Conditions: 150 mM KOAc, 10 mM MgCl2 and 150 mM bicine (pH 8.5), 24 C. Chemical mapping of a 177-nucleotide RNA with 2A3 and DMS. It was measured as part of the RMDB library OK2TST. For DMS the reverse transcriptase was MarathonRT. The DMS profile rests on 1,700 reads.
RNA sequence: GGGAACGACUCGAGUAGAGUCGAAAAGAGCCGACUGGCUUUUCAGGAAAUCACCAUUGAAGAACUGAACGUCACGGUGACCGCUCAUGAAAUGGAGAUGGCGAAACUGCGCGAUCAUCUGCGUCUAGCCAUAUACUCGGUUCGCCGAGUAUAUGGCAAAAGAAACAACAACAACAAC
Reactivity to 2A3 in 0.01 (KOAc 150mM, MgCl2 10mM, bicine 150mM(pH8.5), 24C), signal-to-noise 2, nucleotides 027 to 126: g000a010g000c040c040g080a200c180u080g030g000c010u300u030u010u050c020a000g020g060a030a040a020u030c000a020c190c040a150u070u300g030a050a020g020a070a040c010u040g000a020a000c020g020u020c000a010c070g000g050u000g000a030c000c000g000c010u040c060a060u120g090a130a120a030u190g020g010a030g010a030u100g030g020c030g010a030a070a090c120u140g020c010g000c000g060a060u050c040a040u020c040u070g030c020g010u010c070u060a000
Reactivity to DMS in 0.01 (KOAc 150mM, MgCl2 10mM, bicine 150mM(pH8.5), 24C), signal-to-noise 3, nucleotides 027 to 126: g000a170g010c020c040g050a120c240u020g000g000c020u010u010u000u010c020a020g000g010a020a150a120u000c050a070c100c130a130u010u000g000a060a080g020a240a180c040u000g000a060a070c300g010u000c040a050c100g000g000u000g000a100c050c050g000c070u000c050a040u010g000a060a060a050u010g000g020a100g000a040u000g000g000c050g000a070a110a100c110u010g000c080g000c020g030a030u000c030a030u000c040u010g000c120g000u000c120u000a140